[RMDB]
RNA sequence: GGGAACGACUCGAGUAGAGUCGAAAAACGAGGAUGGGAAAGCAUGCCCGAUUAGUAUACGGUCACCACAUUGCAUGCGAAAGGAUGGCUCUUACUAAGCAUGCGAAAGGAUGGCACGGUGCUUCGUAGUCCUCUGUGGUAGCUGGAUGGGAAAGCAGCAUGCGAUAUCGUUCGCGAUAUCGCAUGCAAAAGAAACAACAACAACAAC
Reactivity to 2A3 in 0.01 (KOAc 150mM, MgCl2 10mM, bicine 150mM(pH8.5), 24C), signal-to-noise 1, nucleotides 027 to 156: a010c080g000a010g000g000a010u000g040g030g060a020a020a020g050c000a010u090g080c000c000c000g070a000u080u190a020g050u080a060u030a050c020g020g030u010c030a020c010c000a050c060a130u020u110g000c000a000u010g010c030g050a100a170a010g050g000a050u090g070g010c040u000c020u100u110a000c010u010a050a000g000c000a000u000g000c010g000a000a020a000g180g020a150u000g020g010c020a000c060g000g000u010g020c020u000u000c030g060u010a000g050u030c000c000u070c000u000g030u030g020g070u020a020g000c040u000g040g000a090u070g090g010g050a020a110a030g060c050a040
The record gives the reactivity of an RNA of 207 nucleotides to 2A3. Reactivities are given for positions 27 through 156. The 2A3 profile rests on 672 reads. 2A3 adducts were read by reverse transcription with SuperScript II with manganese. It was measured as part of the RMDB library OK3TST.